[RMDB]
RNA sequence: GGGAACGACUCGAGUAGAGUCGAAAAAUGAAUUGAUUCGUCAAUUCAUGACCGCAAGCGAGCCGAAAGGCUUUUUAUGCGUACGCUGGCGAAAGCCUAAAAAUCAUCGUGUCUUCGGACACGAUAAUAAUUAAGAACCGUUCGCGGUUCUUAAUUAAAAAGAAACAACAACAACAAC
Reactivity to DMS in 0.01 (KOAc 150mM, MgCl2 10mM, bicine 150mM(pH8.5), 24C), signal-to-noise 5, nucleotides 027 to 126: a010u000g000a020a000u000u010g000a020u000u020c170g020u000c000a000a010u000u000c000a010u000g000a180c190c010g010c020a040a090g010c300g010a020g020c000c000g000a140a050a170g010g010c010u000u000u000u010u010a110u010g000c000g010u010a070c250g010c140u000g010g020c020g000a070a060a110g010c010c000u010a010a060a060a080a070u010c090a030u000c000g010u000g010u000c000u000u020c210g010g000a010c000a000c000g000a000u000a030a060
Reactivity to 2A3 in 0.01 (KOAc 150mM, MgCl2 10mM, bicine 150mM(pH8.5), 24C), signal-to-noise 1, nucleotides 027 to 126: a000u000g000a010a000u000u020g010a010u020u080c140g030u010c040a000a000u010u010c010a000u020g070a040c000c050g000c000a000a000g010c030g080a010g050c010c000g110a140a040a010g000g010c070u000u000u000u000u000a030u010g010c000g030u040a040c110g040c160u040g000g010c000g050a100a020a010g000c020c020u120a080a110a020a010a030u150c040a000u010c020g000u010g000u000c000u030u040c210g050g000a000c000a000c010g010a000u000a000a000